[RMDB]
RNA sequence: GGGAACGACUCGAGUAGAGUCGAAAACGGGCCUAUAUGUUGAGAUACAUGGAGGGCGCUGUUCGCUGCGCCUAGGUGUUAUCCCUAGGGUGUUAGGCAGUGGAACUGUGACAGCCGUAAGGGAUGAGCGCCUAUCUAGGUUCGCUUGGAUAGGCGCAAAAGAAACAACAACAACAAC
Reactivity to DMS in 0.01 (KOAc 150mM, MgCl2 10mM, bicine 150mM(pH8.5), 24C), signal-to-noise 6, nucleotides 027 to 126: c060g000g000g010c010c020u000a120u040a030u010g000u000u000g010a110g010a120u020a020c030a010u000g000g020a110g000g010g010c030g010c020u000g000u000u010c050g000c020u000g000c010g000c000c000u000a020g000g010u000g010u030u040a090u050c240c000c000u000a050g000g000g000u010g030u030u040a140g010g030c000a010g020u000g020g020a030a090c010u010g010u010g000a090c070a080g010c010c010g010u010a070a060g010g010g000a060u010g000a130
Reactivity to 2A3 in 0.01 (KOAc 150mM, MgCl2 10mM, bicine 150mM(pH8.5), 24C), signal-to-noise 9, nucleotides 027 to 126: c020g030g050g010c010c010u070a060u010a020u120g020u030u040g030a030g000a030u070a070c010a010u020g050g020a080g070g030g000c020g000c030u020g020u030u030c050g000c040u030g000c030g210c000c000u000a010g020g020u090g080u300u210a100u140c010c000c000u010a020g030g030g020u080g100u120u100a120g070g000c000a000g000u060g150g100a070a050c020u040g020u040g070a050c040a050g060c010c020g040u100a050a080g080g000g010a050u070g040a030